[RMDB]
RNA sequence: GGGAACGACUCGAGUAGAGUCGAAAAUGAACGUGCGUACAUCUCUCUCAGACUGUACGACAGUCUGACUCUCUCGCACUGUAGUUCCACGAGAGAGAGAGAGCGUUGGAACUAGGGUGAAAUGAAAUUAAAUAACGAACUUCGGUUCGUUAUUUAAAAAAGAAACAACAACAACAAC
Reactivity to DMS in 0.01 (KOAc 150mM, MgCl2 10mM, bicine 150mM(pH8.5), 24C), signal-to-noise 7, nucleotides 027 to 126: u010g010a120a120c140g010u000g020c010g030u000a090c090a130u000c010u000c020u000c030u000c010a040g000a030c030u000g000u000a110c270g000a130c010a020g000u000c000u010g000a090c120u010c040u000c020u000c010g010c050a030c020u010g020u010a010g010u010u000c000c000a050c040g000a070g000a060g010a060g000a050g000a020g000a080g020c070g020u000u000g000g000a020a010c010u000a040g000g000g010u010g000a060a080a080u000g000a070a070a100
Reactivity to 2A3 in 0.01 (KOAc 150mM, MgCl2 10mM, bicine 150mM(pH8.5), 24C), signal-to-noise 3, nucleotides 027 to 126: u200g000a120a020c050g030u060g020c020g010u080a080c030a130u000c000u020c000u000c000u000c000a010g010a060c010u010g020u130a140c130g100a060c090a000g000u000c020u020g030a030c000u000c000u010c020u030c030g000c010a020c030u060g180u040a030g000u050u000c000c000a000c000g010a010g010a010g000a010g000a010g000a010g010a000g030c010g050u060u060g020g010a000a000c020u020a060g050g060g030u130g050a090a080a080u120g030a090a040a040